[RMDB]
RNA sequence: GGGAACGACUCGAGUAGAGUCGAAAAGCAGAGGUUAUUAUCACCGCCUGAUGCAACCUAUUCCAGGUGACCAUCCUUGCGGCCUAAGUCUGGAAUAUGACUCAGCAUUUCUGAUGCUGCAAACAAAGCACCUAGAUAUCUUCGGAUAUCUAGGUGCAAAAGAAACAACAACAACAAC
Reactivity to DMS in 0.01 (KOAc 150mM, MgCl2 10mM, bicine 150mM(pH8.5), 24C), signal-to-noise 1, nucleotides 027 to 126: g040c010a080g010a080g010g010u000u010a090u000u000a110u010c110a050c170c050g090c010c080u010g000a090u000g040c050a040a150c000c050u000a060u010u020c040c010a040g030g000u000g000a040c150c070a090u000c080c140u000u000g000c050g000g040c030c060u000a060a190g030u000c000u000g000g020a070a020u000a030u040g010a100c060u000c040a010g000c010a050u000u000u030c160u000g000a170u000g010c000u040g000c220a040a100a130c130a010a070a200
Reactivity to 2A3 in 0.01 (KOAc 150mM, MgCl2 10mM, bicine 150mM(pH8.5), 24C), signal-to-noise 1, nucleotides 027 to 126: g010c000a020g020a060g040g070u190u090a190u170u150a150u270c030a000c090c100g000c010c010u090g040a110u030g000c000a070a080c010c010u020a030u070u120c040c000a030g000g030u020g040a000c000c030a050u060c030c000u100u240g030c080g020g060c010c010u070a070a000g020u000c010u000g010g020a000a030u080a070u090g000a000c000u010c030a000g000c010a030u020u090u090c130u220g000a030u020g000c010u020g080c030a080a030a030c020a010a140a030